[RMDB]
RNA sequence: GGGAACGACUCGAGUAGAGUCGAAAAGAGGACUCAAACGUCACCGAGUGGAGCAGUGCAGACAACGGCGUCGAAGGGAAAUGGAACCUCUCGAGGGGAGGACCCUACCAGUACACGAAUAGUAUGCCUGCGAGGGAGAUUAAUUUCCGGGUGAAAAGACGAAGAAUCUAUUCGUAGAUUCUUCGUCAAAAGAAACAACAACAACAAC
Reactivity to DMS in 0.01 (KOAc 150mM, MgCl2 10mM, bicine 150mM(pH8.5), 24C), signal-to-noise 2, nucleotides 027 to 156: g020a080g010g000a110c080u000c060a080a090a160c090g050u000c040a100c130c030g030a110g000u000g010g020a240g010c020a070g030u030g050c030a090g010a090c030a120a060c070g000g000c020g020u000c070g000a220a110g000g020g020a090a080a080u000g020g000a100a130c040c020u010c030u000c070g000a180g040g010g000g000a040g000g000a210c060c010c030u000a090c060c000a080g030u000a090c070a070c080g020a050a080u000a150g000u000a070u010g010c000c000u010g020c100g000a100g000g010g010a120g010a090u000u000a040a030u000u000u000c010c030g000g020g000u000g000a140a070a050a210
Reactivity to 2A3 in 0.01 (KOAc 150mM, MgCl2 10mM, bicine 150mM(pH8.5), 24C), signal-to-noise 2, nucleotides 027 to 156: g060a010g000g030a030c030u030c140a080a090a070c090g050u050c020a020c060c020g030a010g020u090g030g030a040g000c030a030g030u060g180c000a000g050a090c040a080a020c090g060g010c040g010u020c030g030a030a050g030g010g010a010a080a110u180g000g040a130a140c000c000u030c010u030c050g100a150g010g100g000g000a000g000g010a070c010c000c000u040a070c010c020a040g010u040a010c020a010c040g040a040a020u060a080g010u020a030u050g020c010c010u030g010c050g010a020g000g040g000a080g010a020u040u180a080a110u040u200u050c000c000g000g020g000u050g010a050a070a020a050
The data come from the RNA Mapping Database (RMDB), library OK3TST. Structure probing data (DMS and 2A3) for a 207-nucleotide construct. DMS adducts were read by reverse transcription with MarathonRT. The 2A3 profile rests on 2,179 reads. The reactions ran in a buffer of 150 mM KOAc, 10 mM MgCl2 and 150 mM bicine (pH 8.5), at 24 C.